[RMDB]
RNA sequence: GGGAACGACUCGAGUAGAGUCGAAAAAUUUACAGUCACAACUUUACUUAAGUUAAUAAGUGUUAAUUCAUCAAACGACAGUUGUUCAACUGGUUGAUGAUGGUAUUUCUUCAUUCUUGUAAGUAAAUCUACGCCGAAUGUUCGCAUUCGGCGUAGAAAAAGAAACAACAACAACAAC
Reactivity to 2A3 in 0.01 (KOAc 150mM, MgCl2 10mM, bicine 150mM(pH8.5), 24C), signal-to-noise 1, nucleotides 027 to 126: a030u080u070u170a230c160a120g120u140c000a000c000a070a060c010u100u000u040a000c000u020u110a000a050g000u080u110a050a040u100a040a040g260u010g100u090u070a050a080u000u070c010a010u000c000a000a180a000c140g140a000c070a000g000u040u010g080u010u300c030a050a000c000u000g030g010u000u030g000a010u000g000a080u080g020g000u000a080u120u080u000c010u080u020c030a120u000u000c030u050u140g030u120a110a020g000u010a210a190a030